[RMDB]
Structure probing data (2A3) for a 207-nucleotide construct.

RNA sequence: GGGAACGACUCGAGUAGAGUCGAAAAAACGUUGCAUGAUCGUAAAACAUGCCCGGCUUACCGUGAGCCGCCUUUGAAAGAAAGGUUUACACAGACUCUGUUGCGUUACGCACGUACCUAACUUGUGAAAACGGCAUCUUGUUCGCAAGAUGCCGAACUUCCCUCGCUUGUUCGCAAGCGAGGGAAGAAAAGAAACAACAACAACAAC
Reactivity to 2A3 in 0.01 (KOAc 150mM, MgCl2 10mM, bicine 150mM(pH8.5), 24C), signal-to-noise 1, nucleotides 027 to 156: a000a000c000g010u000u010g000c000a000u000g000a040u210c010g070u250a190a000a000a000c000a000u010g010c010c000c000g000g000c000u010u030a030c010c060g050u050g080a010g010c000c000g000c000c000u080u010u000g040a130a100a000g020a000a030a010g000g000u010u120u070a000c020a000c000a000g050a140c030u050c020u070g040u100u010g030c010g050u040u020a170c300g000c040a000c020g020u040a020c010c020u050a090a100c010u060u070g000u000g030a040a000a010a010c000g000g010c000a000u010c000u040u020g000u020u000c150g020c040a000a000g000a000u000g120c000c000g000a000a010
Reactivities are given for positions 27 through 156.
The reactions ran in a buffer of 150 mM KOAc, 10 mM MgCl2 and 150 mM bicine (pH 8.5), at 24 C.